[RMDB]
RNA sequence: GGGAACGACUCGAGUAGAGUCGAAAAUCGUUAUUCGUAACGAAGCGAUCCUAAGUCAGGAGGGCGUAUGGGAGCCUCGGGUAUCGGAAACGAUAUCUCUAGCGUGGGCGAAGAACAUACGCACUCCUGAUAUGGAACAAUGGGUCUUCGGACCCAAGCUACCAUAUAGUUUCGACUAUAUGGUAGCAAAAGAAACAACAACAACAAC
Reactivity to 2A3 in 0.01 (KOAc 150mM, MgCl2 10mM, bicine 150mM(pH8.5), 24C), signal-to-noise 6, nucleotides 027 to 156: u040c010g010u050u050a060u180u060c160g090u120a070a080c110g010a050a020g070c030g080a080u090c000c000u080a170a030g020u000c000a000g000g000a000g010g010g000c010g000u000a000u000g000g010g020a020g000c010c000u010c010g000g000g010u000a000u000c010g010g050a080a040a030c010g000a000u010a000u000c100u030c090u150a090g110c050g120u300g020g020g000c000g030a100a010g010a030a000c000a000u000a000c010g000c000a000c000u020c000c000u000g000a000u000a000u000g010g020a050a060c040a120a150u130g000g000g000u000c000u030u030c200g100g000a000c000c000c000a000a010
Reactivity to DMS in 0.01 (KOAc 150mM, MgCl2 10mM, bicine 150mM(pH8.5), 24C), signal-to-noise 2, nucleotides 027 to 156: u000c010g010u000u000a030u010u020c290g030u000a010a050c000g030a030a120g040c120g020a130u010c020c000u010a090a290g020u020c040a040g020g010a040g000g000g030c010g010u000a020u000g010g030g000a300g010c000c010u020c020g000g020g000u000a000u000c000g000g000a210a160a300c000g000a020u000a030u000c000u000c010u010a100g000c100g020u020g020g040g040c040g020a070a190g000a100a210c020a000u000a040c030g040c000a000c010u000c010c000u010g000a020u000a020u010g000g010a070a140c130a110a170u010g000g030g000u010c000u000u000c180g020g000a100c000c000c000a030a070